[RMDB]
RNA sequence: GGGAACGACUCGAGUAGAGUCGAAAAGAAUCACCGUACCUAUUUAGGUUUACGCUCCAAGAUCGGUGGAUAGCAGCCCUAUCAAUCUCUAGGAGAACUGUGCUAUGUUUAGAAGAUUAGGUAGUCUAUUACACAGCCAUGUUCGCAUGGCUGUGAAUACAUAAUGGACGUUCGCGUCCAUUAUGUAAAAAGAAACAACAACAACAAC
Reactivity to DMS in 0.01 (KOAc 150mM, MgCl2 10mM, bicine 150mM(pH8.5), 24C), signal-to-noise 3, nucleotides 027 to 156: g020a120a080u010c020a300c040c020g040u000a040c010c010u020a160u000u000u000a080g000g000u000u010u010a080c010g000c000u000c030c010a050a050g020a040u000c050g010g030u000g030g020a050u010a060g030c050a180g000c130c110c000u000a060u000c020a030a050u000c030u000c040u000a110g020g000a080g010a070a090c050u000g000u000g000c010u000a120u010g010u000u000u010a100g000a110a100g000a100u000u000a060g020g020u000a090g000u000c020u000a090u010u000a240c000a020c010a010g010c000c000a010u000g030u000u000c270g070c020a020u000g020g020c000u010g000u010g000a040a110
Reactivity to 2A3 in 0.01 (KOAc 150mM, MgCl2 10mM, bicine 150mM(pH8.5), 24C), signal-to-noise 4, nucleotides 027 to 156: g030a010a050u080c010a000c030c010g010u030a030c010c020u060a130u220u220u260a040g010g020u020u090u100a070c070g000c020u020c020c010a050a000g010a080u060c030g000g030u010g010g040a020u040a010g070c110a030g000c010c010c010u040a050u080c040a070a050u010c020u020c010u070a030g020g000a040g040a030a070c050u110g000u070g090c040u080a040u130g070u000u080u040a120g000a180a020g010a070u090u050a040g020g030u010a030g030u030c020u020a130u080u130a050c030a000c000a000g000c000c000a010u020g010u060u070c120g030c120a010u010g000g000c000u000g000u000g010a000a000